Chemical mapping of a 177-nucleotide RNA with 2A3 and DMS. The reactions ran in a buffer of 150 mM KOAc, 10 mM MgCl2 and 150 mM bicine (pH 8.5), at 24 C. For 2A3, 1,905 sequencing reads were counted. Reactivities are rounded to 0.1 and cut off at 0 and 3. For 2A3 the reverse transcriptase was SuperScript II with manganese. For DMS the reverse transcriptase was MarathonRT.
RNA sequence: GGGAACGACUCGAGUAGAGUCGAAAAGCUGGUGGUCAAUGCCACAAGGACGGGGUCACCUGCCGGCUACGGCGUGCUGCGCUAUGCGGGCGCCAAUGCGAGCGCGCUGCCCUCGGACCCCAUCCUGUGCUUUAAUGCGUUUCGACGCAUUAAAGCAAAAAGAAACAACAACAACAAC
Reactivity to 2A3 in 0.01 (KOAc 150mM, MgCl2 10mM, bicine 150mM(pH8.5), 24C), signal-to-noise 2, nucleotides 027 to 126: g020c030u040g000g030u040g050g080u130c120a120a120u260g060c000c030a070c080a080a030g000g040a000c040g010g000g000g000u020c020a100c150c020u030g070c050c000g000g020c000u080a050c090g000g010c020g040u040g080c030u100g070c030g030c040u080a030u300g030c010g120g130g030c130g020c040c000a010a010u030g010c050g020a010g030c030g000c000g000c020u040g000c020c000c020u030c020g060g030a000c000c000c000c010a000u000c000c020u050g010
Reactivity to DMS in 0.01 (KOAc 150mM, MgCl2 10mM, bicine 150mM(pH8.5), 24C), signal-to-noise 2, nucleotides 027 to 126: g020c030u000g010g030u000g010g010u000c170a070a090u000g010c070c030a100c140a130a040g030g000a020c020g020g000g020g000u000c030a240c090c110u010g060c060c040g000g000c000u000a230c160g000g000c000g010u000g000c010u000g000c000g020c100u000a160u010g010c070g000g010g000c100g010c010c070a010a080u000g020c070g030a080g000c020g000c020g000c030u000g000c020c000c010u010c150g010g010a030c000c000c000c010a070u000c010c010u010g010